RNA sequence: GGGAACGACUCGAGUAGAGUCGAAAAGGAGCAUAACCCCAAUUAUUGCAGUAGUAAUGAUGUUAAUGAUGACUGUGAUGGCUGCAGGUGCGGUAUUUACAUGGUAUCAACAAUUCCAACAACAACACCUUUAGUUGGAAUUCGUUCCAACUAAAGGAAAAGAAACAACAACAACAAC
Reactivity to DMS in 0.01 (KOAc 150mM, MgCl2 10mM, bicine 150mM(pH8.5), 24C), signal-to-noise 7, nucleotides 027 to 126: g010g000a110g020c090a070u010a120a140c070c010c010c060a140a080u000u000a050u000u000g010c020a080g010u010a050g010u010a080a050u000g010a070u000g010u000u010a070a070u000g000a090u020g000a040c030u000g010u000g000a050u010g010g010c040u000g010c050a070g020g010u000g020c050g030g010u000a030u000u000u000a080c090a050u010g000g000u000a040u010c050a040a080c150a050a120u010u000c030c020a050a070c070a020a030c060a030a080c180a140
Reactivity to 2A3 in 0.01 (KOAc 150mM, MgCl2 10mM, bicine 150mM(pH8.5), 24C), signal-to-noise 6, nucleotides 027 to 126: g040g010a050g030c040a050u050a130a090c010c010c000c000a020a050u140u070a050u050u090g000c020a020g060u200a020g020u030a100a030u070g100a030u110g030u170u120a110a080u100g050a020u060g030a020c030u010g010u030g050a050u050g060g000c020u020g000c020a020g010g130u120g040c020g030g000u050a090u040u060u030a040c020a040u080g020g010u060a030u090c010a000a060c010a040a020u100u000c050c000a020a000c010a020a000c000a020a010c000a120